[RMDB]
An RNA of 177 nucleotides, treated with 2A3 and DMS and read out base by base.
RNA sequence: GGGAACGACUCGAGUAGAGUCGAAAACGAUGGUAGAGGUCACUCGGGAUAUGAGAAGGGCGGAGGGCUCGAGCGUCCGAAAUCAUGAUCGGUAGUUACUGUACUACCUAUUAAUUUCUGACGAGUGGAUCAUACGGUACUUCGGUACCGUAUGAUCAAAAGAAACAACAACAACAAC
Reactivity to 2A3 in 0.01 (KOAc 150mM, MgCl2 10mM, bicine 150mM(pH8.5), 24C), signal-to-noise 2, nucleotides 027 to 126: c030g050a060u130g070g010u080a040g030a040g110g000u080c070a060c080u010c040g000g030g010a070u100a110u300g110a130g030a090a090g030g030g000c100g030g100a100g110g010g040c040u050c060g020a040g010c000g000u000c010c000g000a010a010a010u090c100a060u190g060a010u030c020g020g010u010a010g000u000u040a120c130u200g080u130a010c000u010a000c000c000u000a010u010u010a010a030u020u000u000c020u020g020a030c030g000a040g060u160g140
Reactivity to DMS in 0.01 (KOAc 150mM, MgCl2 10mM, bicine 150mM(pH8.5), 24C), signal-to-noise 2, nucleotides 027 to 126: c140g000a100u000g010g010u000a080g000a160g010g010u010c100a060c010u000c040g000g000g010a110u000a110u000g010a110g010a100a110g010g010g000c110g000g010a120g010g000g040c030u000c050g010a060g020c030g020u000c020c130g000a050a020a020u000c130a040u010g000a030u000c110g000g000u000a010g000u000u000a120c290u020g010u000a040c010u000a000c000c000u010a030u000u000a020a060u000u010u000c010u000g000a060c020g010a080g000u000g010
Values cover nucleotides 27 to 126. For 2A3, 2,071 sequencing reads were counted.